[RMDB]
RNA sequence: GGGAACGACUCGAGUAGAGUCGAAAAGCCCGUCACAGGUAUCUAGUCACCUGUGACGGGCCGAGAAUGGAAUCCGUCAAAGGAACACACCUUUGUCAGAUUCUACUUCCUGCCCAUCACAGGUGACCAUCUAUUAGAGGUUCGCCUCUAAUAGAUGAAAAGAAACAACAACAACAAC
Reactivity to 2A3 in 0.01 (KOAc 150mM, MgCl2 10mM, bicine 150mM(pH8.5), 24C), signal-to-noise 9, nucleotides 027 to 126: g040c010c020c010g230u300c110a250c090a120g180g080u190a080u100c060u080a040g010u010c010a000c000c000u000g000u000g000a000c010g000g000g000c000c010g110a140g000a010a000u010g000g000a000a000u000c000c010g000u010c000a000a010a010g040g070a230a030c090a010c010a050c130c000u010u000u000g000u000c010a010g000a000u000u000c000u000a010c080u010u010c000c000u010g000c000c000c000a020u020c000a010c000a000g000g000u010g000a000c010
Reactivity to DMS in 0.01 (KOAc 150mM, MgCl2 10mM, bicine 150mM(pH8.5), 24C), signal-to-noise 3, nucleotides 027 to 126: g010c000c010c010g040u030c130a160c210a090g020g020u000a030u010c070u000a130g000u000c020a030c000c000u000g010u000g000a010c110g020g000g010c000c040g000a030g000a020a040u000g010g010a010a010u000c000c030g030u000c010a000a010a010g010g020a140a180c230a160c300a150c000c030u000u000u000g020u000c000a020g000a010u000u000c000u000a000c180u000u000c000c010u000g000c010c000c020a140u000c030a020c060a010g000g010u020g000a040c020
Notes
Conditions: 150 mM KOAc, 10 mM MgCl2 and 150 mM bicine (pH 8.5), 24 C. Chemical mapping of a 177-nucleotide RNA with 2A3 and DMS. For 2A3 the reverse transcriptase was SuperScript II with manganese. Reactivities are rounded to 0.1 and cut off at 0 and 3. Source: RMDB libraries RFM100 and RFMREP, as collected in RNAgym.